[RMDB]
RNA sequence: GGGAACGACUCGAGUAGAGUCGAAAAUCAAGAACUACUGAACUCCGAGAUGGAUCAGGACAGCAGUUCUGACGCAUCGGAUGAUUUUCCGGGAUACGCCUUACAUCAUUCUACAUAUAAUGGAUCCACCCACUAUGGGGUUCGCCCCAUAGUGGGUAAAAGAAACAACAACAACAAC
Reactivity to 2A3 in 0.01 (KOAc 150mM, MgCl2 10mM, bicine 150mM(pH8.5), 24C), signal-to-noise 2, nucleotides 027 to 126: u060c010a020a020g040a040a090c030u090a010c020u090g030a050a020c040u030c020c020g030a070g020a150u110g110g020a060u040c010a010g000g020a020c020a040g150c040a040g010u010u020c000u010g000a020c040g020c070a040u040c030g020g020a030u050g020a040u050u060u080u050c040c010g000g040g000a020u080a130c050g070c020c000u030u030a030c040a050u070c010a040u070u100c100u130a130c060a140u150a000u050a150a220u140g080g000a020u000c010c000
Reactivity to DMS in 0.01 (KOAc 150mM, MgCl2 10mM, bicine 150mM(pH8.5), 24C), signal-to-noise 2, nucleotides 027 to 126: u000c050a110a010g000a090a030c040u000a050c030u000g030a090a150c110u020c010c010g000a060g000a120u010g030g010a070u010c020a090g000g000a070c020a130g010c090a040g000u000u000c000u000g000a040c140g000c080a060u020c090g010g020a040u010g010a160u010u000u000u000c030c020g000g030g010a050u010a050c100g020c020c060u000u000a090c120a050u000c010a030u000u000c070u010a080c100a100u000a140u000a040a070u010g000g000a100u000c000c060